RNA sequence: GGGAACGACUCGAGUAGAGUCGAAAAACAUGGGAUAGCAAUCAGUAAAGCCUGCCUUUGGGCGUUACAGAGUGCGAAUGACAAAACAAAGGAUACGUACGUAGAAACUGCAGUGGAAUAUUUUCGGACGCGGGUUCGACUCCCGCCGCCUCCACCAGACACACGUACUGUUCGCAGUACGUGUGUCAAAAGAAACAACAACAACAAC
Reactivity to 2A3 in 0.01 (KOAc 150mM, MgCl2 10mM, bicine 150mM(pH8.5), 24C), signal-to-noise 2, nucleotides 027 to 156: a000c040a050u110g020g010g000a020u040a020g030c030a040a100u090c040a080g020u040a060a010a000g010c000c000u000g000c020c000u000u000u020g000g000g000c000g000u020u010a020c020a030g030a030g120u060g030c050g070a060a060u150g060a050c070a030a000a010a000c010a000a000a000g010g010a020u030a050c060g030u000a010c000g010u050a040g080a100a090a000c060u090g040c090a010g000u000g000g050a140a090u170a230u150u220u090u180c030g010g000a000c010g000c000g030g000g000u050u040c020g000a030c030u020c030c000c020g010c000c010g040c000c000u020c000c000a010c010c000a050